[RMDB]
RNA sequence: GGGAACGACUCGAGUAGAGUCGAAAAAGGCGAGCGUUAUCGGUGGCUUGCUGAUUGGCGGAUUAACACCAACCGCCAGUGACGUUCUGGCAACACUGGAGCCUGAAGCAUUCUCAAUUCCGCUCUAGCUGAAUAAUCAUUUCGAUGAUUAUUCAGCAAAAGAAACAACAACAACAAC
Reactivity to 2A3 in 0.01 (KOAc 150mM, MgCl2 10mM, bicine 150mM(pH8.5), 24C), signal-to-noise 7, nucleotides 027 to 126: a000g030g000c020g010a030g010c040g050u110u090a100u170c050g020g040u040g060g040c050u020u040g000c010u020g030a070u030u050g010g000c010g020g020a080u120u160a150a060c090a040c100c020a030a040c000c000g000c000c000a010g020u020g040a050c080g020u080u040c050u110g020g000c020a060a040c030a050c090u050g050g030a010g000c010c020u030g030a040a010g020c020a050u060u020c030u000c000a020a130u120u020c040c020g040c040u010c040u050a030
Reactivity to DMS in 0.01 (KOAc 150mM, MgCl2 10mM, bicine 150mM(pH8.5), 24C), signal-to-noise 8, nucleotides 027 to 126: a070g010g010c030g020a040g010c050g020u010u010a090u010c070g010g020u000g020g010c120u000u010g010c030u010g010a070u000u000g010g010c020g010g010a130u000u010a090a140c150a190c120c120a130a090c020c020g010c000c000a020g010u000g000a180c150g000u010u010c060u000g000g000c020a040a070c070a070c060u000g000g000a110g000c030c040u010g000a080a090g010c080a080u000u000c010u000c030a110a190u010u000c080c110g010c070u010c090u000a280